Chemical mapping of a 207-nucleotide RNA with 2A3 and DMS.
For 2A3, 1,320 sequencing reads were counted.
Values cover nucleotides 27 to 156.
For DMS, 1,990 sequencing reads were counted.
DMS adducts were read by reverse transcription with MarathonRT.
The reactions ran in a buffer of 150 mM KOAc, 10 mM MgCl2 and 150 mM bicine (pH 8.5), at 24 C.
RNA sequence: GGGAACGACUCGAGUAGAGUCGAAAAGAAGUAUGCAAAAAGUAGCAUUCACAUCCUCAUCGAAAUCUCAGCAGAGGAUAGAAAAGAACAGGAGAGGCUCCUUCAGAUGGAGCGUUAGGGAAUUACUCUUUGAGGAGGUGACAUUUCAGAGAGCGUACAUGCUAUUUAGCUUCGGCUAAAUAGCAUGAAAAGAAACAACAACAACAAC
Reactivity to 2A3 in 0.01 (KOAc 150mM, MgCl2 10mM, bicine 150mM(pH8.5), 24C), signal-to-noise 3, nucleotides 027 to 156: g040a060a020g030u070a020u100g000c040a110a030a110a030a040g080u120a060g070c010a020u050u090c020a030c000a050u000c000c000u030c010a040u040c030g050a080a090a080u070c120u050c080a050g030c040a040g040a020g040g040a020u080a060g060a050a100a030a020g020a060a020c050a040g060g050a080g020a010g070g020c000u000c000c010u120u150c070a110g030a190u120g010g000a030g020c000g000u020u040a010g010g010g000a000a070u100u060a080c010u010c030u050u040u050g020a020g010g010a010g020g000u010g010a020c040a060u060u100u040c040a050g060a000g010a020g080c040g020u040a050
Reactivity to DMS in 0.01 (KOAc 150mM, MgCl2 10mM, bicine 150mM(pH8.5), 24C), signal-to-noise 1, nucleotides 027 to 156: g010a110a100g010u000a040u010g010c030a080a080a060a140a100g030u000a110g020c090a040u000u000c070a070c050a110u010c010c020u000c040a090u010c040g020a080a030a080u010c010u000c040a080g000c130a150g000a080g000g010a000u010a110g000a090a080a120a130g000a070a130c050a050g060g010a070g000a100g030g000c020u000c000c000u000u010c110a210g010a090u010g000g000a010g020c020g000u000u020a050g040g010g010a040a080u000u000a090c070u000c010u010u000u000g000a060g000g030a020g010g000u000g000a070c090a130u010u000u010c070a090g010a150g010a120g020c070g010u000a170